Structure probing data (2A3 and DMS) for a 207-nucleotide construct. Conditions: 150 mM KOAc, 10 mM MgCl2 and 150 mM bicine (pH 8.5), 24 C.
RNA sequence: GGGAACGACUCGAGUAGAGUCGAAAACUGGGAUUCAAACCUGAUCUGUCUGAUUUCCAAUCCUAAAGUCCAUCCCUCUCUGCUGCAGGACAGGGAUCCUUUGUGAGCUGAAUCUGGUCUGCCACCUGUUUUUGUACAGCCCAAGAGUUAAGAAUAAAAAUCAGGCAUGAUUCGUCAUGCCUGAUUUAAAAGAAACAACAACAACAAC
Reactivity to 2A3 in 0.01 (KOAc 150mM, MgCl2 10mM, bicine 150mM(pH8.5), 24C), signal-to-noise 2, nucleotides 027 to 156: c030u060g000g000g040a030u050u120c060a110a010a120c030c020u070g010a070u020c030u050g110u010c030u020g060a130u020u040u110c020c050a040a050u030c010c000u130a090a090a010g050u000c050c010a040u010c000c010c000u020c000u000c000u030g060c020u070g070c090a030g000g040a030c010a010g030g000g030a090u050c010c020u060u140u120g150u040g040a030g040c040u010g050a020a040u000c020u070g040g000u010c030u000g020c010c010a030c010c000u020g050u020u050u010u000u110g060u060a050c000a060g040c030c000c000a040a010g060a010g030u100u100a130a020g030a170a160u160a080a170
Reactivity to DMS in 0.01 (KOAc 150mM, MgCl2 10mM, bicine 150mM(pH8.5), 24C), signal-to-noise 2, nucleotides 027 to 156: c170u010g000g030g000a060u000u000c040a040a060a040c010c070u000g000a080u010c090u000g000u020c010u000g030a070u000u000u000c030c000a070a140u020c010c020u000a040a110a090g010u020c050c040a170u010c020c010c030u020c030u010c010u000g010c020u010g010c220a280g000g000a060c030a050g000g000g000a080u000c020c010u000u010u000g020u000g040a110g010c040u010g020a070a070u010c010u000g000g010u000c020u010g040c040c010a090c050c020u000g000u000u000u000u000u020g010u010a080c060a150g000c030c020c060a050a120g010a140g000u000u000a070a140g020a070a120u010a030a130